[RMDB]
About this RNA:
Chemical mapping of a 177-nucleotide RNA with DMS and 2A3. For 2A3, 2,848 sequencing reads were counted. Conditions: 150 mM KOAc, 10 mM MgCl2 and 150 mM bicine (pH 8.5), 24 C. It was measured as part of the RMDB library VIROID.
RNA sequence: GGGAACGACUCGAGUAGAGUCGAAAAGGAACCUCUCUUGAGCCCCUCUGGGGAAUUCUCGAGUUGCCGCAAAAGGCAAGCAAAGAAAAAACAAGGCAGGAAGGUACUUACCUGAGAAAGGAGCCCCGCAAUAAGAUAAGUUCGCUUAUCUUAUUGCAAAAGAAACAACAACAACAAC
Reactivity to DMS in 0.01 (KOAc 150mM, MgCl2 10mM, bicine 150mM(pH8.5), 24C), signal-to-noise 3, nucleotides 027 to 126: g000g010a170a120c030c020u000c050u000c010u000u000g010a120g010c030c000c020c020u020c220u010g030g020g000g010a060a070u000u000c000u000c040g010a240g000u000u000g020c010c000g000c110a080a060a130a180g010g000c000a020a040g010c090a100a060a050g020a010a020a090a100a140a140c080a060a090g010g000c110a050g010g000a070a010g000g000u000a080c020u000u000a110c000c020u010g000a100g010a060a100a060g000g020a160g010c030c000c030c270
Reactivity to 2A3 in 0.01 (KOAc 150mM, MgCl2 10mM, bicine 150mM(pH8.5), 24C), signal-to-noise 2, nucleotides 027 to 126: g020g000a050a040c000c010u010c010u010c030u020u020g030a090g010c000c010c020c030u090c190u220g000g000g000g030a040a040u070u000c000u000c010g080a100g070u000u010g000c000c000g090c110a110a120a090a050g010g000c010a010a010g040c030a000a080a060g130a050a100a000a010a020a040c020a060a000g090g010c020a010g090g010a080a020g030g020u020a040c010u040u040a040c010c010u050g010a070g150a150a090a000g010g010a020g070c000c000c000c040